Conditions: 150 mM KOAc, 10 mM MgCl2 and 150 mM bicine (pH 8.5), 24 C. This 207-nucleotide RNA was probed chemically with 2A3.
RNA sequence: GGGAACGACUCGAGUAGAGUCGAAAAGAAGGGUGAAAGCCCUUGAUACUGUAGUGGAAAUUAUAAAUAAGGAGAGUUCUGAGUUGCUUAAGCAGAACUAAAAUAAAAAGACAAGCAUUAUUACAAACAUGGCGAGGUAAGUUCGCUUACCUCGCAAGGCUAUUUACGAGUUCGCUCGUAAAUAGCCAAAAGAAACAACAACAACAAC
Reactivity to 2A3 in 0.01 (KOAc 150mM, MgCl2 10mM, bicine 150mM(pH8.5), 24C), signal-to-noise 1, nucleotides 027 to 156: g030a030a010g040g010g030u020g050a110a040a010g020c020c030c030u010u000g000a000u030a110c030u050g050u050a020g000u050g060g060a010a100a070u120u090a080u220a120a080a070u190a050a020g080g050a140g020a000g030u010u000c000u000g070a050g110u110u070g030c020u050u010a030a030g000c000a010g030a010a000c030u070a020a010a010a000u080a000a090a000a000a000g030a010c030a000a000g030c000a010u000u130a030u120u110a170c200a060a050a030c050a100u100g070g000c000g000a000g000g000u000a000a000g000u000u020c040g020c020u000u000a000c000c000u000c010g010c000a000a000
Source: RMDB library M2RFPK, as collected in RNAgym.